An RNA of 177 nucleotides, treated with DMS and 2A3 and read out base by base. Reactivities are given for positions 27 through 126. The data come from the RNA Mapping Database (RMDB), libraries RFM100 and RFMREP. For DMS the reverse transcriptase was MarathonRT.
RNA sequence: GGGAACGACUCGAGUAGAGUCGAAAAUUUGUUGCAGUUUCGGUUUGUGACCGACACUAACGGGUAGUUGGGGCACCUCGAAUACGCUGUUUUACUCGUUUUUGCGAUCACAAAUUCUGAAAUUGCAGCAGUUUGAUGUAUUCGUACAUCAAACUGCAAAAGAAACAACAACAACAAC
Reactivity to DMS in 0.01 (KOAc 150mM, MgCl2 10mM, bicine 150mM(pH8.5), 24C), signal-to-noise 1, nucleotides 027 to 126: u010u010u000g020u000u010g010c000a010g010u000u000u000c000g000g000u000u010u020g000u000g010a000c030c010g000a110c000a000c000u010a010a010c010g010g010g000u000a010g020u020u020g010g000g010g010c020a080c100c120u010c220g020a120a120u050a090c190g020c020u000g000u010u020u000u030a000c000u000c010g010u000u000u000u000u000g010c000g000a020u000c010a010c030a000a000a010u000u000c020u030g020a020a010a000u010u000g000c010a020
Reactivity to 2A3 in 0.01 (KOAc 150mM, MgCl2 10mM, bicine 150mM(pH8.5), 24C), signal-to-noise 4, nucleotides 027 to 126: u130u060u180g040u010u040g010c000a020g010u010u000u000c000g010g000u000u010u000g000u000g010a010c000c000g040a070c000a000c010u000a000a000c000g010g000g010u020a060g120u080u200g110g010g030g030c020a040c040c120u160c060g070a050a080u210a150c100g020c010u060g300u120u090u020u000a000c000u000c010g000u000u020u010u000u000g020c010g000a010u010c000a000c010a000a010a030u180u090c070u130g000a000a000a000u000u000g000c000a000